[RMDB]
RNA sequence: GGGAACGACUCGAGUAGAGUCGAAAAGAUAUGGAUUCGAUGGAGAACUAUGAAGUCGGAAACGAUGGAGUUCCCAUUCGAAUCCUAAGUCAAAACGUAAUGCUGUUCUUCGGAACAGCAUUACGAAGAUAUGUUGGCUGUUCGCAGCCAACAUAUCAAAAGAAACAACAACAACAAC
Reactivity to 2A3 in 0.01 (KOAc 150mM, MgCl2 10mM, bicine 150mM(pH8.5), 24C), signal-to-noise 1, nucleotides 027 to 126: g030a020u110a060u170g000g010a000u010u020c020g020a020u030g040g050a300g010a290a020c020u060a250u300g040a010a020g010u010c020g020g010a090a030a030c020g000a020u020g020g000a000g000u000u000c020c020c000a000u180u140c000g000a010a010u000c000c000u000a050a000g050u020c040a000a000a070a180c010g000u000a000a010u010g000c000u010g020u000u010c010u040u100c300g040g010a000a000c010a010g000c000a010u000u000a010c010g000a000a000
Reactivity to DMS in 0.01 (KOAc 150mM, MgCl2 10mM, bicine 150mM(pH8.5), 24C), signal-to-noise 2, nucleotides 027 to 126: g000a010u000a300u020g000g010a020u000u000c000g000a020u000g020g010a150g020a000a000c000u000a230u000g010a170a300g000u000c000g000g000a170a120a100c010g030a010u000g000g000a020g010u000u010c010c000c000a020u030u010c020g010a060a000u000c000c000u000a020a020g000u000c030a070a070a130a090c020g020u000a000a010u000g000c010u000g020u000u000c010u000u020c180g030g000a000a020c000a000g030c000a000u000u000a000c010g010a040a060

Structure probing data (2A3 and DMS) for a 177-nucleotide construct. High DMS reactivity at an A or C suggests that its Watson-Crick edge is free. Values cover nucleotides 27 to 126. For 2A3 the reverse transcriptase was SuperScript II with manganese. Source: RMDB library TTRDEL, as collected in RNAgym.